[RMDB]
RNA sequence: GGGAACGACUCGAGUAGAGUCGAAAAUAAGUGCUCGUCCUCCUCGUAAACAGGGCUGCGGCGUGCCGGCUUAUGAGGCCCGUAAGAUUGAUGACCCAGAGAGUUAAAACUCCGGAACUCGGCGUGACAAACAGACGUGCUUCGGCACGUCUGUUUGAAAAGAAACAACAACAACAAC
Reactivity to DMS in 0.01 (KOAc 150mM, MgCl2 10mM, bicine 150mM(pH8.5), 24C), signal-to-noise 2, nucleotides 027 to 126: u040a020a040g000u030g000c050u000c060g010u000c000c000u000c090c020u000c090g060u000a050a160a100c190a150g010g010g000c160u020g010c120g000g010c000g000u000g050c060c020g000g030c080u010u030a090u060g000a240g040g000c050c020c010g050u010a090a110g000a090u020u000g000a040u010g000a140c090c000c030a080g060a100g010a030g000u020u010a070a040a070a100c050u000c040c050g010g000a040a100c060u000c030g020g050c010g000u030g020a150
Reactivity to 2A3 in 0.01 (KOAc 150mM, MgCl2 10mM, bicine 150mM(pH8.5), 24C), signal-to-noise 2, nucleotides 027 to 126: u070a090a020g050u020g030c000u020c030g090u010c010c000u000c000c000u050c000g070u070a070a130a230c060a090g000g000g040c060u030g030c020g010g000c060g050u010g000c020c020g090g010c000u080u040a050u160g010a020g090g000c020c000c000g000u060a000a000g070a070u080u110g000a060u100g000a050c000c020c030a060g040a000g030a000g170u020u140a050a100a110a000c000u050c000c060g060g000a030a030c020u000c120g000g030c060g110u170g020a000
An RNA of 177 nucleotides, treated with DMS and 2A3 and read out base by base. DMS adducts were read by reverse transcription with MarathonRT. 2A3 adducts were read by reverse transcription with SuperScript II with manganese. For 2A3, 905 sequencing reads were counted. For DMS, 2,226 sequencing reads were counted.